[RMDB]
The record gives the reactivity of an RNA of 170 nucleotides to 2A3 and DMS. The DMS profile rests on 59,796 reads. DMS adducts were read by reverse transcription with MarathonRT. 2A3 adducts were read by reverse transcription with SuperScript II with manganese. The data come from the RNA Mapping Database (RMDB), library 15KLIB. The reactions ran in a buffer of 150 mM KOAc, 10 mM MgCl2 and 150 mM bicine (pH 8.5), at 24 C.
RNA sequence: GGGAACGACUCGAGUAGAGUCGAAAAAUAGGCUUAUCAAGGGAGGUGGAGGGACUGGCCCGAUGAAACCCGGCAGCCAGAAAUGGUGCUAAUUCCUGCAGCGGAAACGUUGAAAGAUGAGCCGAUGGAGGAGUGUACUUCGGUACACUCAAAAGAAACAACAACAACAAC
Reactivity to 2A3 in 0.01 (KOAc 150mM, MgCl2 10mM, bicine 150mM(pH8.5), 24C), signal-to-noise 9, nucleotides 027 to 129: a000u200a050g000g020c000u020u020a010u050c050a040a070g090g000g010a130g010g030u060g040g040a070g020g010g000a010c010u020g030g000c000c000c000g100a170u110g030a030a040a030c010c000c000g000g000c020a030g140c000c000a010g040a010a080a030u060g010g010u040g010c010u020a050a070u060u050c010c010u050g050c020a000g000c010g040g000a050a040a010c030g020u020u020g060a070a040a010g010a010u010g010a000g000c000c010g010a030u100g070g060a080g080
Reactivity to DMS in 0.01 (KOAc 150mM, MgCl2 10mM, bicine 150mM(pH8.5), 24C), signal-to-noise 6, nucleotides 027 to 129: a050u020a090g000g000c020u030u020a030u040c060a130a060g000g000g000a110g000g040u000g030g010a060g020g000g030a110c050u010g000g000c000c000c000g000a090u000g010a050a090a080c030c040c060g020g000c060a130g000c040c020a040g000a070a070a070u020g020g000u020g000c050u030a060a120u020u000c000c000u050g000c000a020g040c050g000g010a050a040a090c000g000u000u000g040a080a060a080g010a050u000g010a050g030c000c000g000a070u040g010g020a080g010